Chemical mapping of a 207-nucleotide RNA with DMS and 2A3.
RNA sequence: GGGAACGACUCGAGUAGAGUCGAAAAAGUUAGGUUCGCUAUGGUGCAACUCUUUAAGGCAAUAACGAACUAAUUCUAAGCAAGUAAUGGAGAUAUGCCAGGGUCACUAUCUAGCCAUAAUAGUGCUGUAAGUGACUUAGAUUCGUCUAAGUCACAACAGACCAACGGGAUUCGUCCCGUUGGUCUGAAAAGAAACAACAACAACAAC
Reactivity to DMS in 0.01 (KOAc 150mM, MgCl2 10mM, bicine 150mM(pH8.5), 24C), signal-to-noise 1, nucleotides 027 to 156: a100g050u000u000a140g060g010u010u000c010g020c000u000a040u000g010g020u000g040c030a140a050c110u000c120u010u030u020a090a090g020g070c020a050a000u010a010a040c010g000a020a050c010u020a010a060u000u000c100u000a180a110g000c090a070a090g040u010a110a100u000g000g010a160g040a020u000a060u000g050c030c040a150g040g030g020u000c030a090c060u020a010u000c020u000a080g000c040c020a110u000a100a090u000a060g020u000g020c020u030g000u010a100a120g020u010g010a040c000u000u000a000g020a060u000u000c300g020u000c000u010a010a020g050u000c010a000c010a070a110
Reactivity to 2A3 in 0.01 (KOAc 150mM, MgCl2 10mM, bicine 150mM(pH8.5), 24C), signal-to-noise 3, nucleotides 027 to 156: a000g100u060u040a040g040g060u020u030c040g000c030u050a030u100g140g060u060g100c110a210a190c070u110c090u090u210u170a130a040g050g020c000a020a060u070a100a070c030g000a020a000c000u010a060a000u050u070c040u130a010a080g010c030a040a040g030u090a070a030u070g010g050a040g010a030u060a020u140g010c020c040a030g000g030g000u050c000a000c010u010a020u050c010u020a040g070c000c000a010u030a080a080u040a090g060u020g080c120u030g070u100a180a040g000u000g010a000c000u010u000a000g000a010u020u030c040g000u000c160u000a000a020g000u000c000a000c000a010a010
The data come from the RNA Mapping Database (RMDB), library M2RFPK.
The RNA was probed in 150 mM KOAc, 10 mM MgCl2 and 150 mM bicine (pH 8.5) at 24 C.
For DMS, 1,929 sequencing reads were counted.